Chemical mapping of a 177-nucleotide RNA with DMS and 2A3. DMS adducts were read by reverse transcription with MarathonRT. The reactions ran in a buffer of 150 mM KOAc, 10 mM MgCl2 and 150 mM bicine (pH 8.5), at 24 C. Source: RMDB library OK1LIB, as collected in RNAgym.
RNA sequence: GGGAACGACUCGAGUAGAGUCGAAAAUGAAGCUUAUGUGCCCGGGGGCACCAAUCCCUGGUAUGGGGACCCCAACCAGAUGCUCAGCUGUCCCGCGCCGGCCGCGCGUUGUGACCAGCCGGUGAAGACACAGGCUGACAUUCGUGUCAGCCUGUGUAAAAGAAACAACAACAACAAC
Reactivity to DMS in 0.01 (KOAc 150mM, MgCl2 10mM, bicine 150mM(pH8.5), 24C), signal-to-noise 2, nucleotides 027 to 126: u040g000a130a060g010c050u010u040a120u020g020u030g000c100c010c010g010g000g010g000g000c050a100c080c120a090a160u000c080c020c000u010g010g000u050a030u000g010g000g020g010a110c080c000c010c000a140a120c020c000a050g000a050u020g000c000u000c040a060g000c070u000g010u000c010c000c030g000c050g010c000c030g000g000c020c070g050c130g010c090g000u000u000g000u010g010a130c150c050a210g000c000c020g000g000u010g000a090a070g000
Reactivity to 2A3 in 0.01 (KOAc 150mM, MgCl2 10mM, bicine 150mM(pH8.5), 24C), signal-to-noise 2, nucleotides 027 to 126: u090g030a010a000g040c030u130u140a080u270g010u140g070c000c000c040g040g020g080g000g040c050a030c190c060a090a060u040c050c000c000u010g100g060u230a270u250g030g000g030g030a090c000c020c000c070a000a010c000c000a020g020a070u100g000c000u010c050a050g000c040u010g020u030c000c000c000g000c000g030c030c000g030g000c000c000g020c000g060c010g070u140u050g030u020g040a060c040c000a030g000c040c050g070g000u030g140a010a000g090